Conditions: 150 mM KOAc, 10 mM MgCl2 and 150 mM bicine (pH 8.5), 24 C. The record gives the reactivity of an RNA of 177 nucleotides to DMS and 2A3. Values cover nucleotides 27 to 126. The data come from the RNA Mapping Database (RMDB), library RFMREP. For 2A3 the reverse transcriptase was SuperScript II with manganese. DMS adducts were read by reverse transcription with MarathonRT.
[RMDB]
RNA sequence: GGGAACGACUCGAGUAGAGUCGAAAAUCUCGCUGUUCUGAUUUUGUGAUAAUCAGGACAGGCUAAACAUUCGCUAUAGUACGACCAUGCAUGUGUCCCCAGACCUAGUUCUUUACCUGGGUCUGGUGGAUGGAUACAUGUUCGCAUGUAUCCAUCCAAAAGAAACAACAACAACAAC
Reactivity to DMS in 0.01 (KOAc 150mM, MgCl2 10mM, bicine 150mM(pH8.5), 24C), signal-to-noise 2, nucleotides 027 to 126: u010c010u000c010g010c000u010g000u000u010c000u000g000a000u000u000u000u010g010u010g020a100u010a030a010u000c000a010g010g010a000c000a000g010g030c100u020a050a080a160c140a080u010u000c060g030c070u000a070u020a090g010u000a080c080g000a050c060c040a050u010g010c050a030u010g010u000g000u000c000c050c010c000a010g000a010c000c000u010a000g000u000u000c290u000u000u010a120c300c000u000g000g010g000u000c000u000g000g020u000
Reactivity to 2A3 in 0.01 (KOAc 150mM, MgCl2 10mM, bicine 150mM(pH8.5), 24C), signal-to-noise 3, nucleotides 027 to 126: u020c010u000c010g000c010u000g000u000u010c000u000g010a000u000u010u180u180g270u060g110a160u130a190a000u000c000a000g010g000a000c000a000g030g000c010u080a070a090a020c050a090u100u120c080g020c060u080a050u060a200g040u050a080c050g020a030c030c020a020u090g000c030a050u090g070u020g040u160c000c020c000c000a000g000a000c000c000u030a000g000u090u110c080u120u250u110a050c010c000u000g010g010g000u000c000u000g000g000u000